Annotation: Chemical mapping of a 177-nucleotide RNA with DMS. The DMS profile rests on 2,782 reads.

RNA sequence: GGGAACGACUCGAGUAGAGUCGAAAAGAUAUGGAGCCAUCUUGACGAUUGGUAGGACAUGCUCGACAUAUCGGAAACGAUAUCAAGAGCAACAGCCUACCAAUCGUCAAGAGUGGCUCCUAAGUCACUUAAAUAUAAACUUCGGUUUAUAUUUAAGAAAAGAAACAACAACAACAAC
Reactivity to DMS in 0.01 (KOAc 150mM, MgCl2 10mM, bicine 150mM(pH8.5), 24C), signal-to-noise 4, nucleotides 027 to 126: g010a040u010a300u010g000g000a020g040c000c000a040u000c010u010u000g010a010c000g020a020u000u000g000g000u000a010g010g020a030c090a220u000g010c000u000c000g000a300c300a010u010a010u000c000g000g000a070a120a250c000g020a010u000a010u000c040a020a300g000a010g000c000a030a050c300a200g000c020c010u000a000c000c010a010a000u000c000g010u000c000a010a010g000a000g040u000g030g010c000u000c000c000u000a010a100g020u000c040a250
For DMS the reverse transcriptase was MarathonRT. Source: RMDB library TTRINS, as collected in RNAgym.